[RMDB]
RNA sequence: GGGAACGACUCGAGUAGAGUCGAAAAGAUAUGGACCGUGGCGACUUGGAUUUACAUCAGCUCGGAAACGAGCUGAGUGUUGUCAGUCGACCACGGUCCUAAGUCAAAAGAUGAGUUCGCUCAUCAAGAAGCGUAUACACUUCGGUGUAUACGCUUCAAAAGAAACAACAACAACAAC
Reactivity to DMS in 0.01 (KOAc 150mM, MgCl2 10mM, bicine 150mM(pH8.5), 24C), signal-to-noise 2, nucleotides 027 to 126: g000a050u010a300u000g030g000a050c000c000g020u000g000g020c000g010a020c000u010u010g040g010a040u010u010u000a010c010a090u000c000a000g000c000u000c000g000g000a180a100a300c010g010a000g030c010u000g000a000g020u010g030u010u000g000u000c020a020g000u000c010g020a250c000c000a000c010g020g000u000c000c000u010a000a110g000u010c040a090a080a120a200g020a000u000g020a050g000u000u000c220g020c000u000c000a010u010c000a090a160

Chemical mapping of a 177-nucleotide RNA with DMS. DMS adducts were read by reverse transcription with MarathonRT. Source: RMDB library TTRDES, as collected in RNAgym.